[RMDB]
Overview:
Chemical mapping of a 177-nucleotide RNA with DMS. Reactivities are given for positions 27 through 126.
RNA sequence: GGGAACGACUCGAGUAGAGUCGAAAAUGCAAAGGCUAGGUGUAAACAAGCUCCAGAACUUUAGGGCCCAGUCAUCAGGAGAAAGGCCAAGUUUGAGCUAUGCACAGCUCAGUUUUGAUGACCGGAGGUGACGGUAGGAGUUCGCUCCUACCGUCACAAAAGAAACAACAACAACAAC
Reactivity to DMS in 0.01 (KOAc 150mM, MgCl2 10mM, bicine 150mM(pH8.5), 24C), signal-to-noise 1, nucleotides 027 to 126: u000g000c100a000a110a090g040g040c080u010a030g000g010u000g040u000a030a060a040c040a030a160g000c030u020c040c170a230g020a030a040c050u000u000u000a120g010g020g000c040c000c110a100g000u000c020a110u000c090a080g020g010a060g000a090a090a070g010g010c030c080a030a040g000u000u030u000g050a020g020c010u000a020u000g020c120a060c080a030g000c010u000c020a020g000u000u000u000u040g010a050u000g000a110c030c030g000g010a050g010